Chemical mapping of a 207-nucleotide RNA with 2A3.
Values are in units of 0.01, from 0 to 300, in steps of 10.
RNA sequence: GGGAACGACUCGAGUAGAGUCGAAAACAUUGGGUUCGCCCAAUGAAAAGCGUACUACCGUAGAGGUCCUGGGAGCUCAUGUAUCCCAAAUAGGAUAUGGAGCGAGGAUCAGGACUACCCACCUACGGUAUCGCAAAGCUAAUUGUUCGCAAUUAGCGUACGGUAAGGCCUUCGGGCCUUACCGUACAAAAGAAACAACAACAACAAC
Reactivity to 2A3 in 0.01 (KOAc 150mM, MgCl2 10mM, bicine 150mM(pH8.5), 24C), signal-to-noise 1, nucleotides 027 to 156: c060a060u050u000g020g030g030u120u090c300g160c040c000c000a000a000u040g040a020a030a000a050g000c000g000u080a040c030u000a000c020c000g000u000a000g010a030g030g020u010c000c000u030g020g000g030a000g010c000u010c030a140u110g000u070a000u000c000c000c040a000a170a000u240a020g000g000a000u000a020u060g000g000a000g020c000g030a170g000g040a000u000c000a000g030g000a000c020u130a120c000c090c030a060c000c000u000a000c000g040g060u070a070u080c000g010c020a110a000a000g040c000u000a000a000u000u000g000u070u090c240g000c220a000a000u020u030a000g030c000